[RMDB]
RNA sequence: GGGAACGACUCGAGUAGAGUCGAAAAUGCCUGGCAUACUUCAGCGAUUACGGGCCCACCUUUGUGGAGUGGAUCGAUGACUCAUCCUGCAACGUGCUGUUUGAGGAUGACUACACCGCCAAGCGCGAUGCAUGCCGAAAUUCGUUUCGGCAUGCAUAAAAGAAACAACAACAACAAC
Reactivity to 2A3 in 0.01 (KOAc 150mM, MgCl2 10mM, bicine 150mM(pH8.5), 24C), signal-to-noise 2, nucleotides 027 to 126: u080g000c010c000u030g000g000c030a040u090a170c040u090u060c000a060g040c020g090a070u000u110a100c010g040g150g000c000c000c000a010c000c040u140u190u300g060u030g000g050a130g040u060g030g050a050u030c040g080a100u050g030a020c010u010c050a010u010c020c000u100g060c020a030a040c020g210u300g160c150u180g030u220u050u130g050a010g030g010a010u000g010a000c000u050a040c050a050c030c050g000c010c000a030a000g000c040g010c040g060
Reactivity to DMS in 0.01 (KOAc 150mM, MgCl2 10mM, bicine 150mM(pH8.5), 24C), signal-to-noise 3, nucleotides 027 to 126: u010g000c020c020u010g000g020c060a110u000a070c140u000u000c060a080g010c010g020a040u010u010a090c060g030g030g030c130c010c020a090c020c170u010u010u000g030u010g060g000a090g000u000g010g000a050u010c050g020a060u000g020a130c300u000c010a000u000c010c000u010g010c070a010a020c020g000u020g020c210u010g000u030u000u000g020a080g010g010a000u000g010a040c120u000a070c120a030c050c060g010c040c060a030a100g010c030g010c090g020